The record gives the reactivity of an RNA of 170 nucleotides to 2A3 and DMS. Source: RMDB library 15KLIB, as collected in RNAgym. Values are in units of 0.01, from 0 to 300, in steps of 10. The DMS profile rests on 14,053 reads.
[RMDB]
RNA sequence: GGGAACGACUCGAGUAGAGUCGAAAAAUAGGCUUAUCAAAAGAGGUGGAGGGACUGGCCCGAUGAAACCCGGCAGCCAGAAAUGGUCCCAAUUCCUGCAGCGGAAACGUUGAAAGAUGAGCCGAUGGGGGUUCGGAGUUCGCUCCGAACAAAAGAAACAACAACAACAAC
Reactivity to 2A3 in 0.01 (KOAc 150mM, MgCl2 10mM, bicine 150mM(pH8.5), 24C), signal-to-noise 4, nucleotides 027 to 129: a000u130a030g000g010c000u010u020a010u040c050a040a090a000a040g200a060g000g010u050g040g080a180g040g000g000a010c000u000g010g000c000c020c010g040a030u180g130a050a090a050c040c010c000g020g040c080a010g000c000c000a010g070a030a130a030u240g070g030u010c000c000c000a020a030u060u040c000c000u020g010c010a000g000c000g030g000a050a020a000c000g010u010u030g040a070a080a040g000a000u010g000a010g000c000c000g010a020u020g030g010g000g020
Reactivity to DMS in 0.01 (KOAc 150mM, MgCl2 10mM, bicine 150mM(pH8.5), 24C), signal-to-noise 4, nucleotides 027 to 129: a090u050a030g000g030c000u000u000a040u000c020a090a090a000a100g000a060g020g050u040g000g000a300g010g000g000a050c000u000g000g000c000c000c000g030a050u000g040a040a140a090c180c090c010g030g080c120a070g030c050c000a050g030a060a080a110u070g000g000u020c020c010c030a030a300u050u010c020c030u000g050c000a030g000c000g000g030a100a050a160c020g050u010u040g020a090a160a110g000a060u050g010a050g040c000c000g000a060u020g010g000g000g000